Overview: Source: RMDB library OK2TRN, as collected in RNAgym. Chemical mapping of a 177-nucleotide RNA with DMS and 2A3. In probing experiments dimethyl sulfate is read out at A N1 and C N3, which are open when not base-paired. For DMS, 3,168 sequencing reads were counted. Values cover nucleotides 27 to 126. The 2A3 profile rests on 1,940 reads.
RNA sequence: GGGAACGACUCGAGUAGAGUCGAAAAUUUUUCCAUUUGAUGGCAAAUAUGACUACACUUCAAAGUGCUGACAUGUAACUAAGGAGGUGAUCACUUGACCAAAGGUACUAAGAAUAAGCACGAAUUCUCUCAGUUAGGUAUUCGUACCUAACUGAGAAAAAGAAACAACAACAACAAC
Reactivity to DMS in 0.01 (KOAc 150mM, MgCl2 10mM, bicine 150mM(pH8.5), 24C), signal-to-noise 4, nucleotides 027 to 126: u000u000u010u000u010c000c000a140u010u010u010g020a090u000g010g010c130a050a080a060u010a070u010g010a080c040u000a080c070a050c030u000u010c120a070a170a110g020u000g020c000u000g020a110c120a040u020g020u000a050a040c050u020a070a300g010g000a070g000g020u000g000a090u000c060a040c060u020u000g020a140c040c030a020a130a040g000g000u000a030c060u000a060a070g010a080a090u020a090a040g010c030a020c070g010a090a110u020u000c070
Reactivity to 2A3 in 0.01 (KOAc 150mM, MgCl2 10mM, bicine 150mM(pH8.5), 24C), signal-to-noise 3, nucleotides 027 to 126: u030u050u000u010u000c020c000a020u210u070u160g140a070u060g010g020c040a030a050a090u180a060u070g020a030c040u070a030c140a030c080u040u090c030a060a060a050g010u010g000c000u040g040a070c020a100u180g000u030a130a040c010u010a030a070g050g010a030g000g050u020g030a030u090c050a020c110u050u070g090a060c010c010a100a010a000g070g000u050a020c020u030a090a030g080a060a130u150a120a010g050c030a010c060g040a060a090u120u000c030